[RMDB]
An RNA of 177 nucleotides, treated with DMS and 2A3 and read out base by base.
Values cover nucleotides 27 to 126.
For 2A3 the reverse transcriptase was SuperScript II with manganese.
RNA sequence: GGGAACGACUCGAGUAGAGUCGAAAAGAUAUGGACUCCAACAGCCUAUGCGUAGGAUAGCACUUGGAUUUACAAGCUUCGGAAACGAAGCUUGUUGUCAGUGCCUUAGGACAUGGAGUCCUAAGUCCUAUUGAAGAGGCUUCGGCCUCUUCAAUAGAAAAGAAACAACAACAACAAC
Reactivity to DMS in 0.01 (KOAc 150mM, MgCl2 10mM, bicine 150mM(pH8.5), 24C), signal-to-noise 3, nucleotides 027 to 126: g000a110u010a290u010g000g000a020c010u000c000c000a060a100c270a300g000c000c010u010a020u010g000c200g020u000a140g030g010a180u010a150g000c000a020c010u000u000g010g010a020u000u020u010a010c000a020a000g000c000u010u010c020g000g000a100a080a210c020g010a020a000g000c010u000u000g000u000u000g010u000c000a030g030u000g010c000c040u000u010a060g010g020a080c170a210u000g010g010a030g000u000c000c010u000a010a080g020u000c020
Reactivity to 2A3 in 0.01 (KOAc 150mM, MgCl2 10mM, bicine 150mM(pH8.5), 24C), signal-to-noise 2, nucleotides 027 to 126: g050a000u100a080u250g040g000a000c010u000c020c010a150a110c090a270g140c000c020u040a040u140g080c190g250u200a130g130g300a300u190a110g010c010a010c040u110u300g290g030a070u300u300u300a010c010a010a000g020c000u010u010c000g000g050a060a210a050c010g000a000a030g000c000u000u000g000u030u000g000u010c010a000g010u000g000c000c000u040u000a000g010g020a030c020a120u160g000g030a010g000u000c000c000u020a000a000g000u060c000